[RMDB]
RNA sequence: GGGAACGACUCGAGUAGAGUCGAAAAAGCCUGCCCGGCAGACCCGAGAUGAAAAGCUCUCCUCCUGCGAAGCCCCUCUUCGGAGCACUGUGCAGCUAGGCCCCUUGGAGGGCGGCAACGCCCGGGCCUGACCACCAAAAUUCGUUUUGGUGGUCAGAAAAGAAACAACAACAACAAC
Reactivity to DMS in 0.01 (KOAc 150mM, MgCl2 10mM, bicine 150mM(pH8.5), 24C), signal-to-noise 3, nucleotides 027 to 126: a140g000c010c010u010g010c040c000c030g000g010c050a050g010a180c250c030c070g000a070g010a050u010g000a040a110a120a170g000c070u000c010u000c020c040u010c150c010u010g000c060g000a130a200g010c050c040c060c040u010c070u000u040c110g030g010a060g020c120a130c070u000g010u030g010c050a040g000c080u000a100g000g020c010c010c010c090u050u030g010g000a110g000g010g010c020g000g000c110a030a170c040g000c110c010c010g000g000g000c050
Reactivity to 2A3 in 0.01 (KOAc 150mM, MgCl2 10mM, bicine 150mM(pH8.5), 24C), signal-to-noise 5, nucleotides 027 to 126: a000g100c020c000u020g010c000c000c010g010g000c020a020g030a090c030c020c060g030a030g010a070u200g030a080a100a020a050g040c010u010c000u000c030c000u060c000c020u040g010c030g030a040a020g010c020c010c040c010u040c040u030u070c070g030g010a040g010c030a040c130u070g050u140g040c010a040g020c030u080a020g030g030c000c010c000c010u010u040g110g020a140g040g010g000c020g000g000c020a070a010c030g010c010c010c020g010g000g020c000
Chemical mapping of a 177-nucleotide RNA with DMS and 2A3. It was measured as part of the RMDB library RFM100. Values cover nucleotides 27 to 126. Values are in units of 0.01, from 0 to 300, in steps of 10. For 2A3, 4,201 sequencing reads were counted.